[RMDB]
About this RNA:
Structure probing data (2A3 and DMS) for a 177-nucleotide construct. For DMS, 1,681 sequencing reads were counted. 2A3 adducts were read by reverse transcription with SuperScript II with manganese. For DMS the reverse transcriptase was MarathonRT. As a SHAPE reagent, 2A3 marks flexible, mostly unpaired nucleotides at the ribose 2'-OH. High DMS reactivity at an A or C suggests that its Watson-Crick edge is free.
RNA sequence: GGGAACGACUCGAGUAGAGUCGAAAACAACUUCCAGAACGCAUGGCAAACGCGGGAAGACGAAUUGCCGAGAUUGAAGCACCAAGACCAGCUCGUGAAGAUGCUCCAGACGCUGAUCAUGGACCACCAUGCAUUAGUGCUUCGGCACUAAUGCAUGAAAAGAAACAACAACAACAAC
Reactivity to 2A3 in 0.01 (KOAc 150mM, MgCl2 10mM, bicine 150mM(pH8.5), 24C), signal-to-noise 3, nucleotides 027 to 126: c010a000a080c040u070u000c010c000a040g110a130a030c060g020c050a030u140g060g030c020a050a030a030c100g000c020g040g110g070a050a030g110a070c030g070a110a120u060u000g030c000c020g020a050g020a090u090u130g020a060a040g010c000a020c060c030a060a020g030a060c010c020a030g000c010u030c070g080u090g060a040a060g090a070u160g030c030u030c030c020a030g000a020c050g000c030u000g010a010u050c030a050u070g020g050a070c040c020a020c020
Reactivity to DMS in 0.01 (KOAc 150mM, MgCl2 10mM, bicine 150mM(pH8.5), 24C), signal-to-noise 3, nucleotides 027 to 126: c070a110a140c100u000u000c000c030a100g010a110a170c110g010c030a170u010g000g000c040a050a060a080c140g000c030g020g020g000a070a090g010a100c110g000a110a070u000u000g010c030c010g010a070g020a180u000u000g010a120a100g010c030a140c010c050a030a080g000a050c030c040a060g010c050u000c040g010u010g020a060a020g010a080u000g000c120u000c020c020a030g000a100c180g010c040u020g010a030u010c020a070u000g010g000a150c030c080a130c180